RNA sequence: GGGAACGACUCGAGUAGAGUCGAAAACUAAUAAAGAGCAAGAAGCUAUUUUGAUGUCUGAAGACGUUAAGUUAAACCCUUCAGAAGAUUUUAUAAAGCACGUCCGCACUAAUGGUGGUUACAAUUCAAACACUAGACUUCGGUCUAGUGAAAAGAAACAACAACAACAAC
Reactivity to DMS in 0.01 (KOAc 150mM, MgCl2 10mM, bicine 150mM(pH8.5), 24C), signal-to-noise 6, nucleotides 027 to 129: c050u000a020a120u050a040a090a070g030a050g050c040a040a050g000a130a090g040c070u020a010u020u020u030u000g020a090u000g030u010c040u000g020a000a000g020a060c300g040u000u010a060a130g050u060u060a030a030a020c010c000c000u000u040c050a030g020a060a070g010a090u010u010u010u010a070u000a020a020a010g030c040a070c060g040u010c000c060g020c050a060c000u000a030a040u040g030g050u030g040g000u000u000a070c180a030a110u040u040c020a020a060a150
Reactivity to 2A3 in 0.01 (KOAc 150mM, MgCl2 10mM, bicine 150mM(pH8.5), 24C), signal-to-noise 5, nucleotides 027 to 129: c020u010a020a180u090a190a080a010g110a000g030c050a080a080g090a080a050g090c020u040a180u060u060u060u070g100a080u100g050u000c010u030g020a030a000g000a020c050g000u070u130a050a000g020u010u090a080a070a040c050c000c000u000u030c000a000g010a040a010g040a040u050u060u080u030a170u140a030a130a000g020c020a010c040g030u000c000c010g000c010a010c040u030a050a120u080g090g030u030g030g000u060u030a010c060a050a050u050u040c030a060a040a000

The record gives the reactivity of an RNA of 170 nucleotides to DMS and 2A3. Reactivities are rounded to 0.1 and cut off at 0 and 3. The DMS profile rests on 25,052 reads. Conditions: 150 mM KOAc, 10 mM MgCl2 and 150 mM bicine (pH 8.5), 24 C. It was measured as part of the RMDB library 15KLIB.